[RMDB]
RNA sequence: GGGAACGACUCGAGUAGAGUCGAAAAAGCCACCGCUACGGCGGUGGCAAGUAGAAAAGUUGGUGCUUAGACCACGCCCUCUACCGUAAUAAUAGAUAAAUAGGCAAGUAUCAGUACGCUGAUACAAAAAACACUCACACGUUCGCGUGUGAGUGAACGUUUGUUCUUUGUUCGCAAAGAACAAACGAAAAGAAACAACAACAACAAC
Reactivity to 2A3 in 0.01 (KOAc 150mM, MgCl2 10mM, bicine 150mM(pH8.5), 24C), signal-to-noise 1, nucleotides 027 to 156: a000g000c000c000a000c000c000g030c000u040a030c190g080g050c000g000g010u020g010g000c020a010a010g000u000a000g010a030a050a020a050g060u100u010g000g000u110g030c210u240u090a060g040a080c010c000a000c000g000c000c000c000u000c000u000a030c050c010g090u070a060a000u050a200a040u150a270g110a080u200a140a040a010u050a090g050g020c050a040a090g000u000a000u000c000a000g000u010a010c200g030c050u000g000a000u000a020c000a020a110a000a000a000a000c020a000c000u020c000a020c000a000c000g020u020u060c180g040c010g100u000g010u000g010a010g000u000g010a010a000
Annotation
The data come from the RNA Mapping Database (RMDB), library M2RFPK. Structure probing data (2A3) for a 207-nucleotide construct. For 2A3, 765 sequencing reads were counted. The reactions ran in a buffer of 150 mM KOAc, 10 mM MgCl2 and 150 mM bicine (pH 8.5), at 24 C.